Source: RMDB library M2RFPK, as collected in RNAgym. An RNA of 207 nucleotides, treated with 2A3 and read out base by base. The RNA was probed in 150 mM KOAc, 10 mM MgCl2 and 150 mM bicine (pH 8.5) at 24 C.
RNA sequence: GGGAACGACUCGAGUAGAGUCGAAAACUCUGAAGGCAUGAUCACCCCGUCCGAUGCGUAAGUUCGUGCUUCCGUCGAACGCGAAAGUCGGACGGCGGCCAUGAGUCGCAACGCAAAGCCGCGGCAAUAAGCUCGUCGUCGUUCGCGACGACGAGAACGAUGAAGUCACGUUCGCGUGACUUCAUCGAAAAGAAACAACAACAACAAC
Reactivity to 2A3 in 0.01 (KOAc 150mM, MgCl2 10mM, bicine 150mM(pH8.5), 24C), signal-to-noise 1, nucleotides 027 to 156: c040u030c050u080g070a130a050g060g020c000a000u000g000a020u110c050a020c030c020c000c010g000u000c010c000g000a000u030g010c000g030u000a110a130g010u000u000c000g000u020g060c090u220u150c060c070g120u100c010g010a000a000c000g010c000g030a170a150a030g030u000c000g000g000a000c000g000g000c000g010g040c000c000a020u020g000a000g000u010c020g000c030a070a170c050g030c170a250a000a020g020c020c040g000c060g000g000c000a010a100u080a080a030g020c000u000c000g000u000c010g000u000c000g030u050u050c100g000c010g080a000c000g000a010c000g010a000g000a000a010
Background
Reactivities are given for positions 27 through 156.